[RMDB]
RNA sequence: GGGAACGACUCGAGUAGAGUCGAAAAGGUUAGCAUGGGCAGACCAUGAAGGCAAUGCAAAGCGCCAUGCCCCUCAUCUGUACAUUGGUGGCGCCAAACCACACAGCCCGUGGGGCUCCACGUGCUGAUUAGGUGGAUGAUUCGUCAUCCACCUAAUAAAAGAAACAACAACAACAAC
Reactivity to DMS in 0.01 (KOAc 150mM, MgCl2 10mM, bicine 150mM(pH8.5), 24C), signal-to-noise 7, nucleotides 027 to 126: g000g010u000u010a100g010c020a020u000g010g000g010c050a080g000a280c300c030a040u010g010a120a130g010g010c060a120a090u010g010c080a030a150a150g000c120g010c020c010a030u010g000c020c060c010c030u000c080a090u010c070u000g010u000a090c130a090u000u010g010g010u000g000g010c030g010c050c080a050a070a150c040c030a090c090a260c030a020g000c020c040c000g020u000g000g000g000g010c200u000c010c000a000c010g010u000g000c010u000g000
Reactivity to 2A3 in 0.01 (KOAc 150mM, MgCl2 10mM, bicine 150mM(pH8.5), 24C), signal-to-noise 3, nucleotides 027 to 126: g060g010u090u110a030g020c020a010u030g010g020g040c030a020g040a100c040c010a030u080g110a090a130g140g020c060a050a040u080g010c010a020a120a080g020c070g090c030c000a010u050g010c000c030c030c020u020c030a200u040c030u100g130u140a070c040a190u050u210g110g010u020g050g000c010g020c040c020a060a060a040c010c000a020c000a010c000a020g000c020c010c010g000u010g010g000g010g150c090u100c040c000a010c000g000u020g000c000u020g010

This 177-nucleotide RNA was probed chemically with DMS and 2A3.
For 2A3 the reverse transcriptase was SuperScript II with manganese.
The data come from the RNA Mapping Database (RMDB), library OK2TST.